[RMDB]
An RNA of 177 nucleotides, treated with DMS and 2A3 and read out base by base. For DMS, 28,934 sequencing reads were counted.
RNA sequence: GGGAACGACUCGAGUAGAGUCGAAAAGGAUGGCGGAUAGGCCGGCGCUGAUCACGACAGCGAAGACAGGUCUGGGCUCAGUCAUAGCUCGAACAGUAGAGGCCGUCGCGGCAAGGACGGCCGACGGCUACCUCUACAGUUUCGACUGUAGAGGUAGAAAAGAAACAACAACAACAAC
Reactivity to DMS in 0.01 (KOAc 150mM, MgCl2 10mM, bicine 150mM(pH8.5), 24C), signal-to-noise 8, nucleotides 027 to 126: g000g010a050u010g000g010c030g010g000a130u030a090g010g010c040c020g000g020c040g000c010u000g010a110u030c100a070c170g010a120c050a020g000c010g010a070a070g010a100c100a070g010g010u010c020u000g000g000g010c030u000c070a070g010u020c070a060u020a090g010c020u000c020g000a090a070c110a070g010u010a050g000a230g000g000c010c020g000u000c000g010c060g000g010c160a070a110g010g000a020c030g000g010c000c000g000a030c090g000g010
Reactivity to 2A3 in 0.01 (KOAc 150mM, MgCl2 10mM, bicine 150mM(pH8.5), 24C), signal-to-noise 9, nucleotides 027 to 126: g100g020a070u110g030g030c040g030g020a070u070a130g050g000c010c000g010g000c010g000c020u050g020a120u120c070a030c140g170a070c030a000g020c030g030a070a010g060a040c060a060g020g040u020c030u050g010g030g000c010u020c060a020g050u040c020a100u100a090g020c010u020c060g050a110a050c060a060g100u170a030g030a090g080g000c030c000g000u000c030g020c060g130g030c090a090a070g060g000a000c000g000g000c000c000g010a010c000g030g000